[RMDB]
RNA sequence: GGGAACGACUCGAGUAGAGUCGAAAAGUCAAGAUGUGUAGGAUAGGUGGGAGGCUUUGAAGUGUGGACGCCAGUCUGCAUGGAGCCCACCUUGAAAUACCACCCUUUAAUGGAAAAACAAAGUGAAACUCCGUAUGAUAUUCGUAUCAUACGGAGUAAAAGAAACAACAACAACAAC
Reactivity to 2A3 in 0.01 (KOAc 150mM, MgCl2 10mM, bicine 150mM(pH8.5), 24C), signal-to-noise 2, nucleotides 027 to 126: g080u020c060a020a000g040a240u120g150u020g030u050a010g020g020a020u000a020g010g060u030g000g080g000a050g130g150c150u100u070u140g050a020a010g030u030g020u030g000g010a000c000g120c030c000a010g020u000c000u020g000c000a010u050g020g050a000g010c010c000c000a010c000c030u020u020g000a000a010a000u020a000c010c010a030c020c010c030u050u060u120a160a150u110g070g150a180a040a080a000a000c060a050a300a040g100u150g110a140a020
Reactivity to DMS in 0.01 (KOAc 150mM, MgCl2 10mM, bicine 150mM(pH8.5), 24C), signal-to-noise 5, nucleotides 027 to 126: g010u000c150a080a080g010a060u000g020u000g030u000a020g020g010a130u000a010g010g030u010g000g000g010a180g010g010c150u010u030u000g010a110a140g020u000g000u000g020g000a010c010g010c190c210a120g000u010c010u000g020c010a020u000g000g000a140g010c000c000c000a010c010c010u000u000g000a090a130a070u000a010c010c010a070c040c010c030u010u000u010a070a090u010g010g000a050a040a050a080a080c140a070a080a100g000u010g010a110a100
The data come from the RNA Mapping Database (RMDB), library M2PK90.
An RNA of 177 nucleotides, treated with 2A3 and DMS and read out base by base.
For 2A3 the reverse transcriptase was SuperScript II with manganese.
The reactions ran in a buffer of 150 mM KOAc, 10 mM MgCl2 and 150 mM bicine (pH 8.5), at 24 C.
For DMS, 4,178 sequencing reads were counted.
As a SHAPE reagent, 2A3 marks flexible, mostly unpaired nucleotides at the ribose 2'-OH.